[RMDB]
Source: RMDB library RFMREP, as collected in RNAgym. Structure probing data (2A3 and DMS) for a 177-nucleotide construct. 2A3 adducts were read by reverse transcription with SuperScript II with manganese. The DMS profile rests on 947 reads. For 2A3, 891 sequencing reads were counted. The RNA was probed in 150 mM KOAc, 10 mM MgCl2 and 150 mM bicine (pH 8.5) at 24 C.
RNA sequence: GGGAACGACUCGAGUAGAGUCGAAAACCUGGAAGCCUUCGGGCUUCCAGGAAAGUUUACUGAGCAUGAUGAAAUGAUGCUCAAAAUGAUUACUCUGAAGAAAGAGUUCGAUCUUCGGAUCGAACUCCAUUUCAUCCACGUUCGCGUGGAUGAAAUGAAAAGAAACAACAACAACAAC
Reactivity to 2A3 in 0.01 (KOAc 150mM, MgCl2 10mM, bicine 150mM(pH8.5), 24C), signal-to-noise 1, nucleotides 027 to 126: c010c010u000g000g020a020a000g000c030c030u030u110c180g080g000g040c000u000u000c000c000a000g000g000a000a020a000g010u000u030u080a120c080u020g000a000g000c000a000u020g020a030u030g150a130a000a190u220g050a050u020g050c020u040c010a070a040a000a000u120g010a000u000u130a100c060u050c050u090g120a100a060g090a170a170a000g000a030g000u020u010c020g000a000u020c000u000u050c090g050g000a000u000c000g000a000a000c000u000c000
Reactivity to DMS in 0.01 (KOAc 150mM, MgCl2 10mM, bicine 150mM(pH8.5), 24C), signal-to-noise 1, nucleotides 027 to 126: c000c010u000g010g010a010a020g000c000c000u000u000c150g010g020g060c000u000u010c000c010a010g030g000a020a010a130g010u000u010u010a160c160u000g000a000g010c000a010u000g040a120u000g030a140a080a140u000g010a000u010g000c010u030c020a010a050a030a090u010g010a140u000u010a050c090u000c050u000g050a070a130g030a110a070a090g010a010g010u000u000c000g010a000u010c000u000u010c230g010g010a010u010c000g010a000a000c000u010c000